RNA sequence: GGGAACGACUCGAGUAGAGUCGAAAAGGCGAUUGGGAAAGGAGUUCUGUCUUUGAUCACCGGUGGUUUUAAGCUUUUCUCUUCAUAUCGGAAGGUUAAUGAGAUCAGAAUCAUGAGAAAUGAGGUCCAUUACGCUUACCUUCGGGUAAGCGUAAUGAAAAGAAACAACAACAACAAC
Reactivity to 2A3 in 0.01 (KOAc 150mM, MgCl2 10mM, bicine 150mM(pH8.5), 24C), signal-to-noise 2, nucleotides 027 to 126: g030g010c050g040a060u100u090g010g020g070a030a070a070g020g020a060g030u070u000c050u040g140u070c030u090u060u080g060a070u050c020a020c070c050g090g010u040g020g000u000u000u000u120a030a000g000c000u170u020u070u000c060u010c000u090u060c040a040u070a070u240c020g050g000a040a030g050g000u000u060a100a030u100g060a010g000a110u080c010a020g070a140a050u050c020a040u110g050a030g070a110a150a070u110g020a040g010g000u000c020
Reactivity to DMS in 0.01 (KOAc 150mM, MgCl2 10mM, bicine 150mM(pH8.5), 24C), signal-to-noise 4, nucleotides 027 to 126: g020g020c040g010a070u010u000g030g000g010a080a060a090g010g010a110g010u000u000c060u000g000u000c020u000u000u000g000a080u000c070a090c070c050g010g020u000g020g000u000u010u000u010a060a100g010c100u000u000u000u000c040u000c030u000u010c090a090u000a060u010c070g020g030a090a090g000g010u000u000a050a050u010g020a060g000a030u010c060a050g010a080a070u000c050a040u010g000a080g000a070a080a050u000g000a050g000g020u000c080

The record gives the reactivity of an RNA of 177 nucleotides to 2A3 and DMS. Source: RMDB library OK2TRN, as collected in RNAgym. Conditions: 150 mM KOAc, 10 mM MgCl2 and 150 mM bicine (pH 8.5), 24 C.